[RMDB]
RNA sequence: GGGAACGACUCGAGUAGAGUCGAAAAAUAAAUGAUGAGUUAACGCUCAUCAAAGUAACGAAAGAUGGCGAUUCGGUACACAUGGAAACAUGCGGCAAACGGAUAAAUACACAGAAUCCGAAAAAAACUCCUUAAGUAAGUUCGCUUACUUAAGGAGAAAAGAAACAACAACAACAAC
Reactivity to DMS in 0.01 (KOAc 150mM, MgCl2 10mM, bicine 150mM(pH8.5), 24C), signal-to-noise 3, nucleotides 027 to 126: a080u010a060a080a100u000g000a010u000g000a020g010u000u000a110a150c300g000c000u000c000a000u000c000a030a060a110g030u000a060a020c110g000a040a070a110g000a110u010g010g040c080g010a080u010u010c030g000g000u000a020c030a100c030a030u000g010g000a130a060a120c000a020u000g000c030g000g000c110a040a080a080c040g000g010a040u000a030a040a070u000a090c190a080c130a090g010a080a010u000c010c010g010a000a000a070a070a080a100a100
Reactivity to 2A3 in 0.01 (KOAc 150mM, MgCl2 10mM, bicine 150mM(pH8.5), 24C), signal-to-noise 2, nucleotides 027 to 126: a000u090a010a060a050u050g000a000u000g000a000g010u040u070a110a020c100g000c000u000c000a000u010c000a000a010a000g050u020a060a010c040g030a150a010a020g110a070u090g070g040c050g060a060u070u000c020g030g040u060a020c040a000c010a020u040g010g000a020a030a050c010a000u040g020c000g010g000c050a090a050a060c010g000g000a010u040a090a130a040u190a070c070a000c000a050g120a040a030u000c010c000g030a090a010a010a000a010a020a050
The data come from the RNA Mapping Database (RMDB), library M2PK90. This 177-nucleotide RNA was probed chemically with DMS and 2A3. High DMS reactivity at an A or C suggests that its Watson-Crick edge is free. Conditions: 150 mM KOAc, 10 mM MgCl2 and 150 mM bicine (pH 8.5), 24 C.